Conditions: 150 mM KOAc, 10 mM MgCl2 and 150 mM bicine (pH 8.5), 24 C. This 177-nucleotide RNA was probed chemically with DMS and 2A3. Reactivities are given for positions 27 through 126. For 2A3, 108,975 sequencing reads were counted. 2A3 adducts were read by reverse transcription with SuperScript II with manganese.
RNA sequence: GGGAACGACUCGAGUAGAGUCGAAAAGAUGAGACUCCACCUGUACGCGAAUAGGUGGGUUAGUUCGCGUACUGACCCUUGUAUACGAGAAUACAAUGUGAAGUUCUCGUACUUCGCGAGUCUCAGAGAUAGGUUACUAGUUCGCUAGUGAUCUAUCAAAAGAAACAACAACAACAAC
Reactivity to DMS in 0.01 (KOAc 150mM, MgCl2 10mM, bicine 150mM(pH8.5), 24C), signal-to-noise 9, nucleotides 027 to 126: g010a120u020g010a010g000a010c000u000c000c050a140c190c080u000g000u000a020c010g020c010g010a010a010u000a080g010g020u010g000g000g010u010u020a070g010u000u000c020g010c020g000u000a010c000u010g000a180c030c030c020u010u020g010u020a170u000a000c010g010a010g010a010a010u000a120c130a120a120u030g020u020g010a110a130g010u000u000c000u000c000g010u010a000c110u010u010c070g010c110g010a020g010u000c000u000c010a060g000a120
Reactivity to 2A3 in 0.01 (KOAc 150mM, MgCl2 10mM, bicine 150mM(pH8.5), 24C), signal-to-noise 9, nucleotides 027 to 126: g110a060u070g000a000g000a000c000u010c010c010a080c020c040u020g000u010a000c000g000c000g010a010a010u060a080g150g050u080g060g050g010u070u050a030g010u000u010c000g000c000g010u000a000c010u040g130a130c010c010c000u040u100g080u050a040u000a020c010g000a000g010a020a010u090a080c120a180a240u280g100u150g210a170a070g020u000u000c000u000c010g000u000a020c040u040u080c050g010c040g030a000g000u000c000u000c000a000g010a000